Description: An RNA of 177 nucleotides, treated with DMS and 2A3 and read out base by base. It was measured as part of the RMDB library OK2TST. The 2A3 profile rests on 2,187 reads. For 2A3 the reverse transcriptase was SuperScript II with manganese.
RNA sequence: GGGAACGACUCGAGUAGAGUCGAAAAUGAGUGCUUCCGCCUCCUCGGGAGUGGUGCUCUCGGCCUUGGCCAGCAUCUGAGCGAUGAGGUCGAUCUUCUUCUCGGUCAUGGUGGACUCCUAUUGCGCCAAUACCUCGUCCUUCGGGACGAGGUAUUGAAAAGAAACAACAACAACAAC
Reactivity to DMS in 0.01 (KOAc 150mM, MgCl2 10mM, bicine 150mM(pH8.5), 24C), signal-to-noise 2, nucleotides 027 to 126: u000g010a070g020u000g000c050u000u010c040c090g000c050c020u000c090c080u000c040g020g000g000a120g000u010g010g010u000g000c000u010c110u020c090g020g000c030c020u000u010g010g000c010c030a080g000c110a040u000c050u000g000a270g010c080g000a060u000g000a070g010g000u000c090g010a050u010c030u000u000c050u000u000c040u000c010g010g010u000c060a040u020g010g050u000g020g000a100c080u000c020c040u010a100u010u000g000c110g000c070
Reactivity to 2A3 in 0.01 (KOAc 150mM, MgCl2 10mM, bicine 150mM(pH8.5), 24C), signal-to-noise 1, nucleotides 027 to 126: u090g020a010g040u090g020c030u080u000c000c000g030c000c010u050c000c010u000c020g030g000g030a050g100u130g000g030u040g000c000u000c000u030c020g000g000c010c000u080u100g160g000c000c000a040g000c030a140u060c080u110g080a070g130c030g090a150u100g010a040g030g000u000c010g030a090u100c030u100u010c000u010u000c010u000c010g050g000u010c050a090u110g000g020u030g050g040a020c010u000c000c000u070a130u090u150g030c070g040c050